[RMDB]
RNA sequence: GGGAACGACUCGAGUAGAGUCGAAAAUGAGCCUCGCCAACAGCAGCCGUUUACGGCUGGAAAGGGGAAAAACAAAGCGCAGGGCAAUGGGGUUUGGUAGGAACUUUUUUCGAAGAAGCCCGGCCCGCCACGAUUAUAGCUUCGGCUAUAAUCGUGGAAAAGAAACAACAACAACAAC
Reactivity to DMS in 0.01 (KOAc 150mM, MgCl2 10mM, bicine 150mM(pH8.5), 24C), signal-to-noise 1, nucleotides 027 to 126: u000g000a120g000c010c010u000c000g040c020c040a010a130c140a070g000c050a000g020c160c030g100u010u010u010a110c030g000g020c000u000g000g010a000a010a040g030g000g020g010a050a090a050a090a080c050a020a010a150g050c070g000c090a080g060g000g000c000a070a120u000g010g000g010g000u020u000u000g000g030u010a230g000g000a040a030c300u000u020u050u000u020u020c000g020a090a270g030a000a000g020c000c000c000g020g010c010c010c010g010
Reactivity to 2A3 in 0.01 (KOAc 150mM, MgCl2 10mM, bicine 150mM(pH8.5), 24C), signal-to-noise 2, nucleotides 027 to 126: u100g000a000g040c000c000u010c000g140c080c010a040a050c030a060g090c000a000g000c010c000g020u050u130u300a120c020g020g000c010u030g060g000a040a060a010g040g000g000g010a040a020a000a130a000c100a040a110a050g110c070g010c160a140g000g000g000c060a060a120u210g040g000g000g030u020u050u030g060g020u010a040g000g040a040a080c070u030u020u120u200u080u010c020g020a070a010g000a020a000g000c000c000c000g000g010c000c000c010g000
The record gives the reactivity of an RNA of 177 nucleotides to DMS and 2A3.
The DMS profile rests on 1,306 reads.
The reactions ran in a buffer of 150 mM KOAc, 10 mM MgCl2 and 150 mM bicine (pH 8.5), at 24 C.
For 2A3 the reverse transcriptase was SuperScript II with manganese.
For DMS the reverse transcriptase was MarathonRT.